[RMDB]
RNA sequence: GGGAACGACUCGAGUAGAGUCGAAAAGCCACAGUUUGGGGAAAGCUGUGCAGCCUGUAACCCCCCCAGGAGAAGCUGGGAAACCAAGCUCAUAGUCAGGCCGAGAACGCCAUGGCACGGAAGAAGCACCUACUACUUUCUUCGGAAAGUAGUAGGUAAAAGAAACAACAACAACAAC
Reactivity to 2A3 in 0.01 (KOAc 150mM, MgCl2 10mM, bicine 150mM(pH8.5), 24C), signal-to-noise 6, nucleotides 027 to 126: g020c010c000a000c000a000g020u040u050u090g070g010g030g110a070a090a010g020c000u000g010u010g020c030a010g030c010c020u060g050u110a070a080c010c000c000c000c010c000c010a010g010g040a270g040a130a040g040c010u000g020g000g000a020a010a010c010c000a030a010g010c010u020c070a110u070a070g030u060c030a020g000g030c020c020g090a110g030a130a040c040g010c010c010a100u050g030g000c040a010c110g050g010a080a050g040a050a010g090c020
Reactivity to DMS in 0.01 (KOAc 150mM, MgCl2 10mM, bicine 150mM(pH8.5), 24C), signal-to-noise 5, nucleotides 027 to 126: g010c080c020a020c010a010g000u010u000u020g000g020g010g010a130a040a060g000c010u010g010u010g030c060a110g040c020c010u010g000u030a130a170c070c000c000c030c000c000c010a040g030g000a170g010a120a060g010c010u030g000g010g000a040a080a080c180c070a040a060g010c020u000c100a130u020a120g020u000c050a070g010g020c010c010g000a150g000a130a140c210g000c000c000a060u030g010g020c000a090c120g020g010a060a050g010a080a100g030c140
Source: RMDB library OK1LIB, as collected in RNAgym. The record gives the reactivity of an RNA of 177 nucleotides to 2A3 and DMS. For 2A3 the reverse transcriptase was SuperScript II with manganese. The RNA was probed in 150 mM KOAc, 10 mM MgCl2 and 150 mM bicine (pH 8.5) at 24 C.